[RMDB]
RNA sequence: GGGAACGACUCGAGUAGAGUCGAAAAGAUAUGGACGAGCAAAUCGUGUUUCUCGGAAACGAGAGGGCACGCAGCUCAGUCCUAAGUCAAACAGCUUGGUCUAGCGUUCGCGCUAGACCAAGCUGAACAGUGAACCUAGGUUCGCCUAGGUUCACUGAAAAGAAACAACAACAACAAC
Reactivity to DMS in 0.01 (KOAc 150mM, MgCl2 10mM, bicine 150mM(pH8.5), 24C), signal-to-noise 2, nucleotides 027 to 126: g000a040u000a300u020g000g000a000c000g000a000g030c000a040a180a130u000c010g000u000g000u000u000u000c000u000c000g010g010a180a160a210c010g020a020g000a040g010g020g000c000a000c000g000c270a280g000c000u000c010a090g010u000c000c000u000a040a080g000u000c050a060a130a300c020a000g020c000u000u000g000g020u010c000u010a000g000c000g020u010u020c130g040c040g050c000u000a000g000a000c000c000a000a030g030c000u010g000a000a090